[RMDB]
RNA sequence: GGGAACGACUCGAGUAGAGUCGAAAAGAUAUGGACUCGACCUCGCUGCUACCCACCUCGGAAACGAGAGGCAGAACUACGAGUCUGAGUCCUAAGUCAAAGACUCCCUCCUUCGGGAGGGAGUCAACGAUAGGAAUAGCUUCGGCUAUUCCUAUCGAAAAGAAACAACAACAACAAC
Reactivity to 2A3 in 0.01 (KOAc 150mM, MgCl2 10mM, bicine 150mM(pH8.5), 24C), signal-to-noise 1, nucleotides 027 to 126: g020a040u100a070u200g010g000a000c000u000c000g000a010c050c050u020c040g030c050u050g020c000u080a110c090c010c070a070c050c000u000c010g040g000a110a060a060c010g010a020g000a000g000g000c040a000g050a200a120c210u210a060c300g000a010g010u030c090u140g000a010g000u050c010c000u010a140a050g060u040c080a230a020a050g000a000c000u010c000c000c000u030c010c010u060u050c140g050g010g000a010g000g000g000a010g000u010c000a010a000
Reactivity to DMS in 0.01 (KOAc 150mM, MgCl2 10mM, bicine 150mM(pH8.5), 24C), signal-to-noise 3, nucleotides 027 to 126: g000a080u000a280u010g000g020a020c000u000c000g020a100c120c030u000c000g030c030u000g010c000u000a070c050c030c070a300c200c020u010c020g000g020a110a090a160c010g000a020g000a120g010g000c000a010g020a110a040c110u000a140c010g010a000g010u000c010u000g010a020g010u000c000c000u000a010a090g000u010c050a100a100a130g000a020c000u000c000c000c000u000c000c000u000u010c190g030g000g000a020g000g000g000a000g010u000c000a000a040